This 207-nucleotide RNA was probed chemically with 2A3. The reactions ran in a buffer of 150 mM KOAc, 10 mM MgCl2 and 150 mM bicine (pH 8.5), at 24 C. It was measured as part of the RMDB library M2RFPK. 2A3 adducts were read by reverse transcription with SuperScript II with manganese.

RNA sequence: GGGAACGACUCGAGUAGAGUCGAAAAGCGCAUGCCCAGGUGGCCGCGAUCUUCAAGGCUACGGCGCGGAUAGGUCCGCGCUGAUCGUUUUCCUCCAACGACGCUAUGGCGUCUUUCCUUCACCCGCAAAAUCGUCUCCCGUUCGCGGGAGACGAAACAGUUAAGCAAGGUUCGCCUUGCUUAACUGAAAAGAAACAACAACAACAAC
Reactivity to 2A3 in 0.01 (KOAc 150mM, MgCl2 10mM, bicine 150mM(pH8.5), 24C), signal-to-noise 2, nucleotides 027 to 156: g060c060g010c030a080u150g020c000c020c030a020g050g000u010g020g000c010c010g080c070g050a040u000c020u080u070c040a030a020g010g000c030u040a010c020g000g000c020g010c030g000g000a120u240a250g230g060u050c000c000g000c000g000c000u000g010a010u000c010g010u040u010u160u080c030c010u100c040c020a020a040c060g010a010c020g000c020u110a110u250g100g010c000g010u000c000u020u000u000c010c000u040u110c070a060c030c020c000g040c080a110a100a090a170u010c000g010u000c000u000c000c000c000g030u010u040c150g010c010g060g000g000a010g000a000c000g000a000a000a000